[RMDB]
RNA sequence: GGGAACGACUCGAGUAGAGUCGAAAAUCAGCACGGGGACCUGUCCGUGGGGAGGCGAAACGGAUGGCACAUCUUCUGGCUUUGGCAAGUAUUGUAUGGGGCCUAGUGAUGCGACUCCACAGGAUUUUUCCUCCGCAAGAUUCGUCUUGCGGAGGAAAAAAGAAACAACAACAACAAC
Reactivity to 2A3 in 0.01 (KOAc 150mM, MgCl2 10mM, bicine 150mM(pH8.5), 24C), signal-to-noise 1, nucleotides 027 to 126: u000c000a000g000c000a000c040g010g000g000g190a020c000c000u040g050u120c000c000g000u060g010g010g010g010a120g030g020c060g060a040a040a040c000g150g000a070u010g000g030c090a000c000a020u030c000u180u000c000u080g020g000c000u060u080u000g020g060c010a010a010g240u230a200u090u240g090u160a290u170g050g000g050g000c000c000u000a030g010u010g000a000u020g000c070g030a030c040u010c000c000a000c000a060g160g000a040u120u000u000